[RMDB]
RNA sequence: GGGAACGACUCGAGUAGAGUCGAAAAUAAAACGACUUCGCGCAUCGAAUCAAGGGAAGCGUGCCGGUGCAGGCAAGAGACCACCGUAAGCGUCGUUGCGACCAAAUAAGCGCCGAUUCACAUCAGCAACAUCCCGCUGGUUCGCCAGUGGGAUGUUAAAAGAAACAACAACAACAAC
Reactivity to DMS in 0.01 (KOAc 150mM, MgCl2 10mM, bicine 150mM(pH8.5), 24C), signal-to-noise 4, nucleotides 027 to 126: u010a040a050a110a120c070g000a080c060u000u000c050g010c010g000c050a060u000c070g010a100a090u020c140a060a170g010g040g010a030a060g020c040g020u000g020c280c010g010g000u010g010c030a040g000g000c040a010a040g000a190g000a030c030c000a050c020c000g020u020a040a050g000c040g010u000c010g010u010u000g000c000g000a110c130c160a060a060a060u040a040a130g010c050g010c010c020g030a080u000u020c110a040c120a070u040c060a090g010c140
Reactivity to 2A3 in 0.01 (KOAc 150mM, MgCl2 10mM, bicine 150mM(pH8.5), 24C), signal-to-noise 5, nucleotides 027 to 126: u160a000a080a010a020c030g090a080c020u040u010c040g010c000g010c070a060u040c040g090a120a050u070c070a110a060g120g000g040a060a010g030c020g030u030g040c020c000g010g020u020g010c030a040g050g000c010a020a000g030a000g000a060c000c000a010c000c030g150u150a030a000g010c000g030u030c010g000u010u010g000c020g030a050c030c020a080a040a030u190a130a030g030c020g000c020c020g030a020u050u060c020a030c000a100u060c040a020g020c010
This 177-nucleotide RNA was probed chemically with DMS and 2A3. The RNA was probed in 150 mM KOAc, 10 mM MgCl2 and 150 mM bicine (pH 8.5) at 24 C. For 2A3 the reverse transcriptase was SuperScript II with manganese.